[RMDB]
RNA sequence: GGGAACGACUCGAGUAGAGUCGAAAAGGUUCAUGGUUCGCCAUGAACCAAAAGUACAGCUAUGAGUACUAGUGUCAUAGCAAAAGAUCGAAAGAUCAAAAAAAAGUAGCUCCUUCGGGAGCUACAACAUGGAAAAUAAGUUCGCUUAUUUUCCAUGAAAAGAAACAACAACAACAAC
Reactivity to DMS in 0.01 (KOAc 150mM, MgCl2 10mM, bicine 150mM(pH8.5), 24C), signal-to-noise 4, nucleotides 027 to 126: g020g020u000u000c000a010u000g000g010u000u010c240g020c010c000a000u000g000a010a000c010c000a010a020a040a200g000u000a010c010a170g000c010u010a000u000g020a000g010u010a000c020u010a140g010u010g040u000c000a000u000a000g000c000a140a060a090a140g010a010u000c000g000a120a090a170g000a020u030c010a010a000a000a080a060a100a140a160g010u010a010g010c000u000c000c000u000u010c170g030g010g010a010g010c000u000a000c000a040a080
Reactivity to 2A3 in 0.01 (KOAc 150mM, MgCl2 10mM, bicine 150mM(pH8.5), 24C), signal-to-noise 3, nucleotides 027 to 126: g010g000u000u000c000a000u010g020g030u030u050c120g050c050c010a000u010g000a000a000c000c000a000a000a020a000g000u000a000c010a000g000c000u000a000u010g010a000g020u010a020c170u110a150g070u050g010u300c000a000u010a000g000c000a000a040a000a100g000a000u000c000g040a060a000a020g020a000u010c040a010a050a060a030a000a000a000a000g000u000a000g000c000u000c000c010u010u020c060g100g000g000a000g000c000u000a000c000a000a000